[RMDB]
RNA sequence: GGGAACGACUCGAGUAGAGUCGAAAACAUAUGACGGAGAGUGGAACACUCAGCGGAAACGCAUCCAAUGUCUGAAGACUUUAAUGGGUAUAACAGUCAGUUGACCCAGAUCCCAACAGACAAUAAACGUAGACCAAAGGUUCGCCUUUGGUCUACGAAAAGAAACAACAACAACAAC
Reactivity to DMS in 0.01 (KOAc 150mM, MgCl2 10mM, bicine 150mM(pH8.5), 24C), signal-to-noise 2, nucleotides 027 to 126: c060a050u010a040u000g030a150c090g000g020a130g010a020g010u000g030g030a060a130c120a060c100u000c030a100g010c050g010g010a100a030a130c040g030c020a300u010c060c020a220a040u000g010u000c000u000g000a150a100g000a100c170u000u000u010a090a140u000g000g010g030u010a060u010a030a010c000a180g010u020c220a120g030u000u000g000a010c000c000c000a000g000a110u000c000c000c000a240a230c030a000g000a010c060a030a030u000a060a080a110
Reactivity to 2A3 in 0.01 (KOAc 150mM, MgCl2 10mM, bicine 150mM(pH8.5), 24C), signal-to-noise 2, nucleotides 027 to 126: c030a020u250a110u220g070a070c080g000g000a000g010a000g050u030g080g180a160a020c000a000c090u060c030a040g020c030g000g020a010a010a000c000g000c020a000u000c010c000a070a120u050g010u020c010u000g080a080a040g000a070c050u000u090u050a100a020u050g000g000g060u100a130u060a300a010c010a020g300u300c020a050g000u110u010g020a000c040c000c000a000g000a070u010c000c020c000a010a020c000a010g010a010c040a030a090u160a080a090a010